[RMDB]
RNA sequence: GGGAACGACUCGAGUAGAGUCGAAAACCCGCCCCUGGACUUGCUUCUCCUCCUCCCUCUGCGUGUGGAGGGAGCCAACGCUUAGGCCGGAGCGAGCCUAGGGGCCGCCGGCCGUGAGGCCGCUCGGCCUUGAGCUGACUUUCGAGUCAGCUCAAGGAAAAGAAACAACAACAACAAC
Reactivity to 2A3 in 0.01 (KOAc 150mM, MgCl2 10mM, bicine 150mM(pH8.5), 24C), signal-to-noise 7, nucleotides 027 to 126: c000c000c000g010c000c000c000c000u020g030g010a060c010u010u010g010c000u010u010c010u020c010c000u020c010c000u000c010c010c000u020c010u050g110c120g210u230g110u250g070g000a000g000g000g000a000g010c010c040a170a070c080g060c150u150u190a050g030g000c060c070g020g000a000g000c000g000a000g000c000c000u010a000g010g000g000g000c000c000g010c000c010g000g000c000c010g030u060g050a070g000g000c010c000g010c030u050c030g070g000
Reactivity to DMS in 0.01 (KOAc 150mM, MgCl2 10mM, bicine 150mM(pH8.5), 24C), signal-to-noise 3, nucleotides 027 to 126: c000c000c020g020c030c010c000c020u010g010g020a030c020u010u000g010c020u000u000c020u010c040c020u000c190c000u000c010c000c000u010c020u000g000c250g010u010g020u000g010g000a030g010g010g010a020g010c160c090a060a070c230g020c140u000u010a070g010g010c060c100g010g010a020g010c030g010a040g020c010c000u000a040g000g010g000g010c010c020g010c300c010g000g000c000c000g010u010g000a220g010g010c020c010g020c050u000c080g020g010